[RMDB]
This 177-nucleotide RNA was probed chemically with 2A3 and DMS.
Source: RMDB libraries RFM100 and RFMREP, as collected in RNAgym.
Reactivities are given for positions 27 through 126.
The RNA was probed in 150 mM KOAc, 10 mM MgCl2 and 150 mM bicine (pH 8.5) at 24 C.
RNA sequence: GGGAACGACUCGAGUAGAGUCGAAAAAGAACCGACACAGGUGCCCUGGGUGAGUAGCCUAAGGCGUGGCGGAACAUUCCGGCCGAGGGAAUUCGGCAAGUUGGCCCCGUAUCUUUGGUAGAAGGGGUAUUCAGACUUAUUUCGAUAAGUCUGAAUAAAAAGAAACAACAACAACAAC
Reactivity to 2A3 in 0.01 (KOAc 150mM, MgCl2 10mM, bicine 150mM(pH8.5), 24C), signal-to-noise 7, nucleotides 027 to 126: a000g060a020a010c000c000g000a000c010a000c000a030g280g070u190g050c000c000c000u000g010g010g000u110g030a140g080u300a010g050c000c020u070a040a010g010g000c020g010u000g000g000c000g000g000a050a010c020a070u080u050c000c000g070g000c000c000g000a020g040g070g080a070a150u150u000c000g000g000c010a030a020g090u090u060g030g010c010c000c000c000g030u080a150u080c030u060u200u260g150g030u130a030g020a140a020g020g000g000g000
Reactivity to DMS in 0.01 (KOAc 150mM, MgCl2 10mM, bicine 150mM(pH8.5), 24C), signal-to-noise 9, nucleotides 027 to 126: a090g010a080a230c000c010g010a030c020a010c010a220g030g040u040g010c000c000c040u000g000g000g010u000g000a210g000u040a180g010c000c000u000a010a050g000g010c010g020u000g000g000c000g010g000a070a260c050a140u010u000c000c000g010g020c000c000g010a020g000g010g040a160a120u020u000c000g000g000c010a080a060g010u010u000g000g000c000c000c000c000g000u030a080u010c010u000u040u030g010g010u030a030g010a070a170g000g010g000g010